[RMDB]
RNA sequence: GGGAACGACUCGAGUAGAGUCGAAAAAGGAAAGGUGGUGAGGGAAGAUGCUGCUUUCCAGUGCAGCUGAGGGCACGUUUCUUCUAGAAUCCUUGUGUUUUAACAUAAUCUUUCUCCUCAGCUCAUUUGUCAAUUGCAGUUCCUUAAAUUUAAAGGAAUCGUAAUAUCAGUUCGCUGAUAUUACGAUAAAAGAAACAACAACAACAAC
Reactivity to 2A3 in 0.01 (KOAc 150mM, MgCl2 10mM, bicine 150mM(pH8.5), 24C), signal-to-noise 6, nucleotides 027 to 156: a000g040g020a040a040a010g030g020u070g010g030u090g040a060g000g030g010a020a010g030a040u100g010c000u010g010c000u040u080u000c030c030a040g010u040g030c100a010g000c020u020g000a020g000g030g000c030a010c070g020u030u060u010c020u110u020c030u080a050g040a050a050u030c040c010u020u050g020u000g020u030u090u060u160a060a040c030a040u130a090a040u120c070u030u150u030c070u030c020c000u000c010a000g000c010u020c030a040u070u090u070g050u030c040a040a130u050u070g030c030a020g010u020u030c010c010u050u020a120a250a190u300u200u230a050a110a010g010g030a030
Reactivity to DMS in 0.01 (KOAc 150mM, MgCl2 10mM, bicine 150mM(pH8.5), 24C), signal-to-noise 3, nucleotides 027 to 156: a060g030g010a060a040a060g010g020u000g030g030u010g010a090g000g000g000a060a060g000a120u000g010c030u000g000c030u010u020u010c060c060a140g020u000g020c070a050g010c000u000g000a070g020g010g010c100a100c090g010u000u010u000c040u000u010c070u000a080g010a090a070u000c010c040u000u000g030u010g010u000u010u000u000a050a130c030a060u000a030a070u000c030u000u000u000c020u000c010c010u000c010a080g000c020u000c030a100u000u000u000g010u000c060a050a150u000u000g010c020a120g010u000u000c010c030u010u000a020a080a190u010u000u000a050a080a090g020g020a070